[RMDB]
RNA sequence: GGGAACGACUCGAGUAGAGUCGAAAAUUCUAUAUCGUGCAAACCUAAUGAUAGGUAACCGAUUGGUACGUGUCUCAGAUCAUUAGUUACAGCUGCAGGAUUGCUUCUUCACGUCAACUUAAACGAGGUCUGGGAGAUACUUCGGUAUCUCCCAGACAAAAGAAACAACAACAACAAC
Reactivity to 2A3 in 0.01 (KOAc 150mM, MgCl2 10mM, bicine 150mM(pH8.5), 24C), signal-to-noise 2, nucleotides 027 to 126: u100u000c140u000a220u000a060u070c020g010u020g100c020a040a000a010c000c000u040a010a010u200g150a050u050a130g130g000u030a020a020c080c000g070a100u050u130g020g040u150a040c080g040u080g070u160c040u000c040a020g030a060u000c000a040u020u050a000g040u050u100a020c000a040g020c000u000g000c000a000g050g000a000u000u050g000c000u030u040c000u020u000c070a060c150g030u000c010a010a050c100u070u200a050a070a110c160g020a100g020